RNA sequence: GGGAACGACUCGAGUAGAGUCGAAAAAAGAAAAGAGAGCAACGGGGCUAGCUGCCGGGUGUUCCAUCCAUGGGAUCGGUGCCGAGUGAGGCUUAUCCCGGGGGUGACGCCUCGGUCCUCCCUUAGCAAGCAUCACACUUCGGUGUGAUGAAAAGAAACAACAACAACAAC
Reactivity to DMS in 0.01 (KOAc 150mM, MgCl2 10mM, bicine 150mM(pH8.5), 24C), signal-to-noise 9, nucleotides 027 to 129: a080a050g050a080a040a020a040g040a050g000a010g030c120a120a090c080g000g000g000g000c020u000a220g010c030u000g050c000c000g010g000g000u030g030u020u020c030c020a020u040c070c080a110u050g020g020g000a020u000c190g020g030u000g000c000c010g000a100g040u060g010a140g000g020c080u030u010a060u040c020c000c010g030g010g030g020g010u000g000a040c120g000c020c030u030c010g000g010u030c300c010u020c020c020c030u000u060a080g030c160a100a070g030
Reactivity to 2A3 in 0.01 (KOAc 150mM, MgCl2 10mM, bicine 150mM(pH8.5), 24C), signal-to-noise 9, nucleotides 027 to 129: a010a000g220a020a060a010a000g120a000g010a000g030c040a050a040c020g000g000g000g000c010u020a020g000c010u110g150c000c000g000g000g000u040g030u100u060c010c000a020u000c030c010a130u170g120g000g000a020u060c150g050g050u070g030c000c010g020a050g090u260g090a060g010g010c000u050u080a060u070c010c000c000g000g000g010g000g000u020g010a020c090g010c000c000u020c010g000g000u020c000c000u010c000c000c000u010u010a030g030c050a040a010g030

Conditions: 150 mM KOAc, 10 mM MgCl2 and 150 mM bicine (pH 8.5), 24 C.
Chemical mapping of a 170-nucleotide RNA with DMS and 2A3.
It was measured as part of the RMDB library 15KLIB.
2A3 adducts were read by reverse transcription with SuperScript II with manganese.